The data come from the RNA Mapping Database (RMDB), library OK2TRN. Structure probing data (DMS and 2A3) for a 177-nucleotide construct. High 2A3 reactivity points to a flexible backbone, as in loops and unpaired stretches. Conditions: 150 mM KOAc, 10 mM MgCl2 and 150 mM bicine (pH 8.5), 24 C. Reactivities are given for positions 27 through 126.
[RMDB]
RNA sequence: GGGAACGACUCGAGUAGAGUCGAAAAUUAAAACCGAUUUGAGGUCUUCCUACCCUAAUAAGGUACGGUGCUGGAGAUUAGUUCAUGGUUUGCAAUGAGCUCUGUUGAAACUGUGCAUUUCCUGAGGGUACCAUGGCUAAUUCGUUAGCCAUGGUACAAAAGAAACAACAACAACAAC
Reactivity to DMS in 0.01 (KOAc 150mM, MgCl2 10mM, bicine 150mM(pH8.5), 24C), signal-to-noise 3, nucleotides 027 to 126: u010u010a090a080a110a100c030c020g010a170u010u000u000g020a150g020g000u000c060u020u010c010c010u000a080c030c020c020u000a120a060u010a080a090g000g030u000a060c100g040g020u010g030c050u000g000g010a060g000a100u000u000a090g010u000u000c040a020u010g010g030u000u010u000g010c100a050a040u010g000a100g000c070u010c050u010g000u000u000g030a070a030a070c060u010g030u010g000c150a060u010u000u010c010c020u000g020a100g020g010
Reactivity to 2A3 in 0.01 (KOAc 150mM, MgCl2 10mM, bicine 150mM(pH8.5), 24C), signal-to-noise 2, nucleotides 027 to 126: u060u030a000a020a000a050c020c000g060a070u090u030u250g150a060g000g000u030c010u070u040c000c000u000a040c000c000c000u070a120a070u230a190a040g010g010u020a020c080g020g000u030g020c080u050g010g050a060g030a110u070u160a060g080u020u090c020a020u050g060g090u070u060u180g110c050a030a060u050g000a040g060c020u060c020u070g160u110u070g040a100a080a030c020u000g000u020g040c030a010u010u010u020c000c000u040g080a100g100g030
For DMS the reverse transcriptase was MarathonRT. For 2A3 the reverse transcriptase was SuperScript II with manganese.